[RMDB]
RNA sequence: GGGAACGACUCGAGUAGAGUCGAAAAAUCUGCAAUCUUACCUGUCCAAGGCGAAAGAGUUCAUCAUGCAGAUGAUACAUGAUUUAUCUGGAACAUAUGACCCUAAUCCUGAGAAUGAAUUAAGAACAGUUGGCGUCAUUUUCGAAUGACGCCAACUAAAAGAAACAACAACAACAAC
Reactivity to 2A3 in 0.01 (KOAc 150mM, MgCl2 10mM, bicine 150mM(pH8.5), 24C), signal-to-noise 1, nucleotides 027 to 126: a000u000c000u070g030c000a070a060u000c220u100u100a220c000c000u000g060u160c040c000a000a300g000g120c060g200a230a140a000g100a070g090u180u090c000a030u060c000a060u000g160c000a000g100a040u000g000a000u040a100c100a160u120g040a300u000u000u000a130u040c000u000g000g090a030a020c040a000u250a180u000g040a040c010c080c000u000a060a000u000c000c000u000g000a000g080a050a010u100g000a000a120u150u120a130a260g000a090a100c040